[RMDB]
RNA sequence: GGGAACGACUCGAGUAGAGUCGAAAAUCUUCGUUUAUACAUUUGAUAACUAUGUACUGACAUCUUACUUUGAGAAGGUCACCAUGCCAGAUACCGUCAGUGAUAGAAACACAGAUAAGAUUCAACCUCUGAUCCCAGGGAGACUCUCAGUAAGGAACUCCUAUUACGGUUUCGACCGUAAUAGGAGAAAAGAAACAACAACAACAAC
Reactivity to DMS in 0.01 (KOAc 150mM, MgCl2 10mM, bicine 150mM(pH8.5), 24C), signal-to-noise 2, nucleotides 027 to 156: u000c030u000u010c050g020u000u010u000a090u000a050c050a000u020u000u010g010a230u000a110a160c100u000a080u000g020u000a080c030u000g010a040c020a020u010c000u010u000a080c050u010u000u000g030a130g010a090a090g000g030u000c040a050c080c050a030u010g000c030c000a120g070a190u000a030c050c100g000u000c050a060g000u010g000a070u010a120g030a100a080a090c040a150c040a140g000a110u000a070a100g000a090u010u000c040a080a140c050c050u010c020u000g010a180u000c010c060c000a210g000g000g000a130g000a120c040u000c010u000c010a080g010u020a120a050g000g010a090a190
Reactivity to 2A3 in 0.01 (KOAc 150mM, MgCl2 10mM, bicine 150mM(pH8.5), 24C), signal-to-noise 2, nucleotides 027 to 156: u030c020u120u050c030g050u070u150u070a140u100a060c080a210u170u060u280g130a090u110a090a080c020u040a040u050g110u080a020c020u010g020a010c010a040u070c020u070u120a130c050u070u180u140g030a070g030a150a060g030g000u000c000a010c070c010a060u270g000c000c010a050g020a110u090a110c040c090g000u000c000a010g000u010g020a010u040a040g100a010a050a000c080a010c030a060g110a130u160a170a020g010a010u110u100c030a050a050c080c000u000c050u070g030a030u010c010c000c030a020g010g020g000a040g030a020c010u040c000u000c100a000g040u010a000a030g010g100a050a050